[RMDB]
RNA sequence: GGGAACGACUCGAGUAGAGUCGAAAAAGUGUGAGUUCAAUACCUGUAUUCAUCAAGGAGGCUGCACAGAUGACUGAGUGGCCUGUAGAACCUAUGGGUGGAUGGAAGAGUCCAUGCCCUGCCCAAAGAGGCAGCUGUGACUCGGCUCCAGGCUGUAUACCUAGUGAUACUUCGGUAUCACUAGGUAAAAAGAAACAACAACAACAAC
Reactivity to DMS in 0.01 (KOAc 150mM, MgCl2 10mM, bicine 150mM(pH8.5), 24C), signal-to-noise 1, nucleotides 027 to 156: a060g040u010g020u000g000a100g000u000u010c060a080a120u000a060c010c020u000g000u000a030u020u000c030a100u000c040a110a130g060g020a090g020g000c010u000g000c030a100c060a100g040a120u010g000a190c020u050g030a090g030u000g000g000c010c010u000g000u010a050g010a060a130c000c000u000a120u000g010g010g060u010g020g000a070u010g020g010a070a240g000a090g000u000c020c000a070u010g010c000c000c070u010g070c010c000c000a080a110a150g000a110g030g010c000a020g020c010u000g020u010g010a070c000u000c030g000g030c020u000c050c010a070g000g020c030u010g020u000a260
Reactivity to 2A3 in 0.01 (KOAc 150mM, MgCl2 10mM, bicine 150mM(pH8.5), 24C), signal-to-noise 2, nucleotides 027 to 156: a000g170u100g000u030g040a030g020u090u040c050a090a020u060a180c000c000u060g000u040a130u040u100c040a090u050c000a030a010g050g030a000g020g000c000u010g000c030a000c030a100g080a160u290g140a240c050u040g020a020g000u040g010g020c000c000u030g010u020a070g020a030a070c000c000u020a110u180g010g010g000u010g030g000a020u020g080g010a080a070g000a040g020u000c000c000a030u070g010c040c000c020u020g010c000c000c030a140a300a010g100a200g040g010c000a000g020c000u040g080u240g050a010c000u000c010g040g000c000u000c000c000a020g020g030c010u040g010u120a090

Structure probing data (DMS and 2A3) for a 207-nucleotide construct. Source: RMDB library OK3TST, as collected in RNAgym. The RNA was probed in 150 mM KOAc, 10 mM MgCl2 and 150 mM bicine (pH 8.5) at 24 C. The 2A3 profile rests on 990 reads.